[RMDB]
RNA sequence: GGGAACGACUCGAGUAGAGUCGAAAAGAAAGGGACCCCUGCCACGGGAGCGUCGGUCAGCACCCUAGGCAUAUUUUUUUAUGCCGCUGACACCCCUCGACGCGGCAGGAGGGGUGGUCCCGAAAGAGCUAUGGUCAUGAUUCGUCAUGACCAUAGCAAAAGAAACAACAACAACAAC
Reactivity to 2A3 in 0.01 (KOAc 150mM, MgCl2 10mM, bicine 150mM(pH8.5), 24C), signal-to-noise 1, nucleotides 027 to 126: g040a060a050a010g010g010g020a010c060c000c020c000u010g010c000c010a080c070g040g080g030a040g010c030g040u030c060g010g010u000c020a000g000c000a080c030c080c110u080a040g000g000c000a010u000a000u020u160u040u000u020u000u000a000u010g030c010c050g000c000u000g000a010c000a110c020c080c040c000u010c000g110a140c010g010c000g000g020c010a030g000g030a040g020g010g010g000u040g020g020u000c000c010c010g010a020a010a000g020a000
Reactivity to DMS in 0.01 (KOAc 150mM, MgCl2 10mM, bicine 150mM(pH8.5), 24C), signal-to-noise 3, nucleotides 027 to 126: g020a070a120a170g000g020g010a060c020c030c020c020u010g010c000c010a060c040g010g000g000a070g020c090g010u000c090g000g010u000c010a010g000c050a160c170c130c140u010a200g010g000c000a010u000a000u000u000u010u000u030u000u000a000u000g000c010c010g000c020u000g000a110c000a090c050c030c120c000u000c000g000a120c000g010c030g000g000c020a030g000g000a090g020g020g010g000u010g000g010u000c010c000c000g020a020a060a090g010a180
An RNA of 177 nucleotides, treated with 2A3 and DMS and read out base by base. For 2A3 the reverse transcriptase was SuperScript II with manganese. The RNA was probed in 150 mM KOAc, 10 mM MgCl2 and 150 mM bicine (pH 8.5) at 24 C. Source: RMDB library OK2TRN, as collected in RNAgym.